Structure probing data (DMS) for a 177-nucleotide construct.
The RNA was probed in 150 mM KOAc, 10 mM MgCl2 and 150 mM bicine (pH 8.5) at 24 C.

RNA sequence: GGGAACGACUCGAGUAGAGUCGAAAAGAUAUGGAGAUAUCAUUGAGUAUAGUCAAGGGAGAGGAGUCUUCGGAAACGAAGAGUCCUCGACGAUCUUGACUAUACUCAAUGAGUAUCUCCUAAGUCAGAACUACUCCUAGUUCGCUAGGAGUAGUUCAAAAGAAACAACAACAACAAC
Reactivity to DMS in 0.01 (KOAc 150mM, MgCl2 10mM, bicine 150mM(pH8.5), 24C), signal-to-noise 2, nucleotides 027 to 126: g000a050u000a300u020g010g010a000g010a000u010a020u010c000a030u000u000g010a020g020u000a000u000a000g010u010c010a000a000g000g000g010a030g010a010g010g020a020g000u010c000u000u000c000g020g010a110a070a170c010g040a000a010g000a020g000u000c000c000u000c000g000a050c300g000a020u000c000u000u010g010a010c010u000a000u000a000c000u000c010a000a000u000g000a050g010u020a010u000c000u010c000c000u000a010a080g000u000c060a140
For DMS the reverse transcriptase was MarathonRT. For DMS, 2,184 sequencing reads were counted.